The record gives the reactivity of an RNA of 207 nucleotides to 2A3 and DMS. The data come from the RNA Mapping Database (RMDB), library M2RFPK. For DMS the reverse transcriptase was MarathonRT. The 2A3 profile rests on 1,513 reads.
[RMDB]
RNA sequence: GGGAACGACUCGAGUAGAGUCGAAAAGAUUCGCCGUCGGCAUUUCCCCAGCAGCCAUGACCUACCAGGCUGCGGUGCGGCUCGCCGCACAAGUCAUCCCUCAUCGGGCGCGUCCUGCGUCCUUCCAAAAACUGACUAACCUUCGGGUUAGUCAGAACGUAUUAAUUUUGUUCGCAAAAUUAAUACGAAAAGAAACAACAACAACAAC
Reactivity to 2A3 in 0.01 (KOAc 150mM, MgCl2 10mM, bicine 150mM(pH8.5), 24C), signal-to-noise 2, nucleotides 027 to 156: g020a050u040u060c070g020c040c070g080u110c080g040g000c040a040u030u080u110c010c000c000c010a030g010c000a000g010c000c010a140u090g070a150c060c040u120a120c070c070a040g020g000c000u010g000c010g000g000u050g000c020g000g070c080u070c110g160c020c000g000c020a010c020a040a000g050u040c010a080u050c000c020c000u070c030a120u130c060g000g010g000c020g000c000g030u190c030c070u110g000c000g020u030c000c000u050u080c030c000a050a050a040a080a100c010u000g000a010c000u000a000a000c010c000u000u080c160g090g010g000u000u010a000g010u000c010a000g000a000a000
Reactivity to DMS in 0.01 (KOAc 150mM, MgCl2 10mM, bicine 150mM(pH8.5), 24C), signal-to-noise 1, nucleotides 027 to 156: g010a130u000u010c050g010c010c010g030u010c090g040g020c070a150u010u000u000c010c010c000c060a070g030c020a050g010c000c030a190u000g010a160c110c070u000a110c060c070a140g010g040c010u000g010c000g030g010u000g000c040g040g000c070u000c220g010c000c020g080c050a070c010a040a080g010u000c010a130u000c010c010c010u000c080a140u000c120g050g000g020c020g000c020g010u010c150c000u000g010c010g010u010c000c000u000u000c040c020a040a040a060a140a290c020u000g010a020c000u000a010a000c010c010u000u000c250g050g000g000u000u000a000g000u010c020a000g010a020a090